This 207-nucleotide RNA was probed chemically with DMS and 2A3. Source: RMDB library M2RFPK, as collected in RNAgym. Conditions: 150 mM KOAc, 10 mM MgCl2 and 150 mM bicine (pH 8.5), 24 C. Values cover nucleotides 27 to 156. For DMS, 5,233 sequencing reads were counted. For 2A3 the reverse transcriptase was SuperScript II with manganese.
RNA sequence: GGGAACGACUCGAGUAGAGUCGAAAAGCCCAGAAGCCUACCCUCAAAAUCGUUUCAGUCCAAAAUUGAUUCGGCGGCCCUGUCAUGAGGCCGAAACGAAGGCACGUACCCCUUCGAAUGGCGUCGGAACUUUCAGUCGUAUUCGUACGACUGAAAAGUUGGUAGGAAGAUUCGUCUUCCUACCAACAAAAGAAACAACAACAACAAC
Reactivity to DMS in 0.01 (KOAc 150mM, MgCl2 10mM, bicine 150mM(pH8.5), 24C), signal-to-noise 2, nucleotides 027 to 156: g030c010c010c000a190g020a100a150g010c010c020u000a090c020c010c000u000c040a080a050a140a130u000c030g040u000u010u000c020a080g050u000c050c150a070a100a190a100u000u000g020a110u000u000c040g030g030c020g000g020c000c010c000u000g010u020c100a100u000g000a080g010g020c020c010g010a010a030a080c030g000a060a020g000g030c020a090c070g000u020a120c050c040c010c010u010u000c010g020a060a110u000g020g010c060g030u000c000g020g010a080a100c090u010u000u000c000a020g030u010c000g030u000a000u000u020c300g040u010a000c000g000a010c000u000g000a010a010a010a110
Reactivity to 2A3 in 0.01 (KOAc 150mM, MgCl2 10mM, bicine 150mM(pH8.5), 24C), signal-to-noise 2, nucleotides 027 to 156: g030c000c010c010a030g130a080a010g020c000c020u030a010c020c030c010u080c060a050a090a040a130u060c030g020u010u020u020c040a050g060u070c080c070a090a120a130a160u060u100g020a060u040u030c020g020g000c010g000g010c030c000c000u060g020u070c030a070u070g040a040g020g000c000c000g030a020a000a000c010g000a010a010g010g010c100a010c110g130u150a080c010c000c020c010u000u000c000g000a050a050u050g000g000c020g000u040c020g050g030a050a080c000u000u020u020c000a000g000u000c000g000u010a000u010u040c060g010u040a000c000g000a000c000u010g000a000a000a000a010